[RMDB]
RNA sequence: GGGAACGACUCGAGUAGAGUCGAAAAACGAGUCGUACGCGACUGGAAUGGUAUUGUCGGCGUAAAAGAACAAGACGUCACCGGACGCGACCGGGCUAAAAAGCGAAACGUCAUCUACGGAUGACGAAAAACGGACCUGGGUUCGCCCAGGUCCGAAGAUACAGACUAUCUUCGGAUAGUCUGUAUCAAAAGAAACAACAACAACAAC
Reactivity to 2A3 in 0.01 (KOAc 150mM, MgCl2 10mM, bicine 150mM(pH8.5), 24C), signal-to-noise 4, nucleotides 027 to 156: a020c020g000a000g020u010c010g010u030a040c090g000c020g080a020c030u020g010g050a100a080u110g090g050u190a140u120u140g070u070c050g060g020c020g030u090a100a120a050a050g110a060a070c050a060a030g080a010c010g010u010c010a000c030c010g010g000a010c010g000c000g010a020c010c000g020g020g000c040u030a010a010a010a000a000g000c000g020a120a020a010c000g000u000c000a000u000c010u020a010c130g090g000a000u000g000a010c000g040a060a020a000a010a010c000g000g010a000c000c000u010g030g000g030u060u080c170g060c000c000c010a000g000g000u000c000c000g000a000a000
Reactivity to DMS in 0.01 (KOAc 150mM, MgCl2 10mM, bicine 150mM(pH8.5), 24C), signal-to-noise 1, nucleotides 027 to 156: a070c050g020a080g010u000c000g010u000a100c150g020c050g020a070c020u030g000g020a180a050u000g040g010u020a090u000u000g000u020c020g000g040c060g050u020a070a040a110a120g000a040a100c050a120a140g000a100c040g030u010c050a120c000c020g010g020a080c050g000c140g000a070c020c010g030g010g010c100u000a040a030a020a080a020g000c000g000a070a090a200c000g000u010c000a000u000c000u000a120c220g040g020a040u000g000a000c000g020a000a010a070a150a140c040g010g010a020c000c000u020g000g000g050u010u010c280g050c030c000c000a060g000g000u000c000c000g000a000a030
Chemical mapping of a 207-nucleotide RNA with 2A3 and DMS. DMS adducts were read by reverse transcription with MarathonRT. For 2A3, 3,220 sequencing reads were counted. Source: RMDB library M2RFPK, as collected in RNAgym. Reactivities are given for positions 27 through 156.